[RMDB]
RNA sequence: GGGAACGACUCGAGUAGAGUCGAAAAGACUGAUCCUGAAGAGCUAGCUCUGAAGCUUCUCCUCUAGUCCUGAUCGAGACUGAUCCUCUGAUCGAAGUCGAGAUCCUUCCUUCUCCUAGCUCUAGGAGACUGACUCUGAAGUCCUAGCUAGUCCUAGUGGUUAACAACGAUUCGUCGUUGUUAACCAAAAAGAAACAACAACAACAAC
Reactivity to DMS in 0.01 (KOAc 150mM, MgCl2 10mM, bicine 150mM(pH8.5), 24C), signal-to-noise 1, nucleotides 027 to 156: g020a110c010u000g000a090u010c080c030u020g010a160a050g010a040g020c010u000a040g000c030u000c090u020g020a200a140g010c010u000u000c000u000c030c020u000c040u000a080g000u000c010c040u020g000a070u000c070g000a300g000a120c040u020g010a090u000c010c040u000c060u000g000a030u000c030g010a070a090g000u020c030g020a280g010a120u000c000c040u000u000c040c110u010u000c000u000c070c010u000a020g000c080u000c050u000a090g020g000a030g000a040c130u010g000a090c020u000c070u000g020a140a100g000u010c020c000u000a070g010c010u000a090g040u020c000c060u000a050g000
Reactivity to 2A3 in 0.01 (KOAc 150mM, MgCl2 10mM, bicine 150mM(pH8.5), 24C), signal-to-noise 3, nucleotides 027 to 156: g040a030c130u100g020a040u030c000c020u080g090a110a040g030a040g030c050u050a010g000c010u020c070u150g070a090a010g010c010u060u020c000u030c010c000u000c070u080a020g070u040c010c050u040g010a010u010c010g020a010g020a050c040u070g020a020u040c040c010u090c190u300g020a040u000c020g130a190a020g020u000c000g020a010g010a060u030c010c010u080u060c010c010u020u060c020u050c000c010u020a050g050c050u070c060u070a010g000g000a040g010a020c040u040g010a030c010u040c070u210g050a070a000g030u030c000c030u050a020g000c000u050a020g070u050c020c020u140a090g020